[RMDB]
RNA sequence: GGGAACGACUCGAGUAGAGUCGAAAAGUGAUGCUAAGGCCGUGAAGCCGCCCUGAUCUCUUCGGAGUUGAGGGGAGUGGUGGAGCCGCCGGACCAAGCGGUUAGUAGGUGAGUGAUGGGGUGACGCGCAUCGUUGGUCAUUCGUGACCAACGAUGCAAAAGAAACAACAACAACAAC
Reactivity to DMS in 0.01 (KOAc 150mM, MgCl2 10mM, bicine 150mM(pH8.5), 24C), signal-to-noise 1, nucleotides 027 to 126: g000u030g000a280u020g000c120u000a100a240g000g010c020c170g020u000g050a200a300g060c040c020g000c000c000c020u070g000a220u020c000u000c000u000u010c230g030g030a030g030u020u000g000a280g010g000g000g000a100g030u000g010g050u000g020g000a290g000c040c190g000c010c030g020g010a100c300c010a070a230g000c020g020g020u000u000a060g020u000a020g020g010u000g010a030g000u000g000a090u000g030g000g000g010u000g010a100c070g040c140
The data come from the RNA Mapping Database (RMDB), library OK2TRN. An RNA of 177 nucleotides, treated with DMS and read out base by base. DMS adducts were read by reverse transcription with MarathonRT.